[RMDB]
RNA sequence: GGGAACGACUCGAGUAGAGUCGAAAAACGGAUGGUACGCCAUUCGACCAUUGGGUAGAAGCGUUCAAUCAGCACCGUGACGGUGCAGAUGGGAAAUUGCCCAUGAUACGCACCAUACGUGGUGCGAAAAAGCCAUCGGUGUUCGCACCGAUGGCAACCAACCUGCUAUGUUCGCAUAGCAGGUUGGAAAAGAAACAACAACAACAAC
Reactivity to 2A3 in 0.01 (KOAc 150mM, MgCl2 10mM, bicine 150mM(pH8.5), 24C), signal-to-noise 2, nucleotides 027 to 156: a000c010g030g000a000u010g000g000u040a040c220g050c030c000a010u000u000c020g020a030c020c020a100u030u060g030g000g000u050a040g040a130a020g080c030g000u070u050c040a030a040u010c040a030g000c010a000c010c000g180u140g300a130c300g010g000u000g000c020a010g010a000u020g030g050g000a010a150a050u010u020g030c000c000c000a010u030g010a010u020a060c030g000c000a010c000c000a020u060a080c290g140u040g010g000u000g000c000g010a030a000a000a010a000g000c000c000a000u000c000g000g000u020g060u080u070c260g030c060a000c000c000g000a000u010g000g030c000a010a010

An RNA of 207 nucleotides, treated with 2A3 and read out base by base.
2A3 is a SHAPE reagent: it acylates the 2'-hydroxyl of flexible nucleotides of all four kinds.
2A3 adducts were read by reverse transcription with SuperScript II with manganese.